RNA sequence: GGGAACGACUCGAGUAGAGUCGAAAACGUACGUGGAGACACGUACGACGAGACUUCGGUCUCGAAUUGCGCCAACUGGCCCGGCGCGCGCGCGAGGCGUCGGUGGUCGGCGAGCCCACGGACGCAAAAACUCGCGCGUAAAUAAAUAGGGUUAGGAGUAUAUGUACAUGUUCGCAUGUACAUAUACAAAAGAAACAACAACAACAAC
Reactivity to 2A3 in 0.01 (KOAc 150mM, MgCl2 10mM, bicine 150mM(pH8.5), 24C), signal-to-noise 1, nucleotides 027 to 156: c010g020u000a000c000g000u000g000g030a040g010a010c010a000c000g000u000a010c010g000a000c010g000a000g000a000c000u030u070c210g110g010u000c010u010c010g000a020a070u110u030g000c000g000c000c010a150a300c050u000g000g000c000c000c000g000g020c000g020c000g030c000g030c000g010c000g000a010g020g000c010g030u000c050g180g010u010g000g020u020c020g010g140c070g040a010g000c000c000c000a000c010g100g010a000c000g000c070a050a000a110a000a050c000u000c000g000c010g000c000g000u000a000a000a000u190a000a000a000u000a000g010g010g000u000u000a010g020g000a030
Reactivity to DMS in 0.01 (KOAc 150mM, MgCl2 10mM, bicine 150mM(pH8.5), 24C), signal-to-noise 1, nucleotides 027 to 156: c030g030u020a000c000g000u050g000g000a300g000a300c000a030c000g000u000a000c010g010a090c080g010a070g000a010c010u000u000c300g020g040u000c000u000c020g000a050a100u020u000g040c000g010c020c010a070a030c000u010g020g000c010c020c000g060g000c050g070c020g180c000g000c050g020c010g010a040g020g030c000g090u000c000g020g090u010g000g000u000c000g000g000c150g030a220g000c190c000c010a030c040g000g000a040c000g000c190a090a090a060a160a240c000u000c020g020c010g000c000g010u000a010a090a110u000a030a070a040u020a070g070g010g010u000u000a020g000g000a240

An RNA of 207 nucleotides, treated with 2A3 and DMS and read out base by base. The reactions ran in a buffer of 150 mM KOAc, 10 mM MgCl2 and 150 mM bicine (pH 8.5), at 24 C. The DMS profile rests on 1,754 reads. Values cover nucleotides 27 to 156.